[RMDB]
RNA sequence: GGGAACGACUCGAGUAGAGUCGAAAAUGGUGAGGAGAUCGGGGUGACCCUGCCCACCCGCACGGCCAGAUUUACGCCUAUCCGUAUCUGACGCCGCGCACCGCGGCGAUGCUGCGCCAGGCUCGUCCCACGAUAGAGCUUUCGAGCUCUAUCGUGGAAAAGAAACAACAACAACAAC
Reactivity to 2A3 in 0.01 (KOAc 150mM, MgCl2 10mM, bicine 150mM(pH8.5), 24C), signal-to-noise 4, nucleotides 027 to 126: u130g010g030u100g030a170g050g010a080g010a100u180c090g000g000g000g050u060g110a170c000c010c020u030g010c020c000c000a030c000c000c050g000c000a030c020g000g000c030c000a000g000a090u160u150u130a040c030g050c020c050u030a080u080c030c000g020u010a010u000c050u060g030a020c070g000c000c000g020c000g000c060a100c080c130g040c060g000g020c060g020a050u110g000c040u010g020c010g050c030c020a030g010g000c010u010c040g050u050c000
Reactivity to DMS in 0.01 (KOAc 150mM, MgCl2 10mM, bicine 150mM(pH8.5), 24C), signal-to-noise 2, nucleotides 027 to 126: u020g000g020u000g020a100g000g000a070g000a030u020c110g000g030g050g030u000g000a120c020c000c000u040g000c040c050c000a060c030c010c090g020c080a020c000g000g020c010c010a010g000a100u030u010u010a110c100g020c110c060u030a100u000c080c040g010u000a010u000c030u000g030a070c160g000c060c030g010c040g010c050a100c090c170g030c020g000g000c030g000a020u000g000c020u000g000c070g020c060c040a080g010g000c000u030c040g010u000c010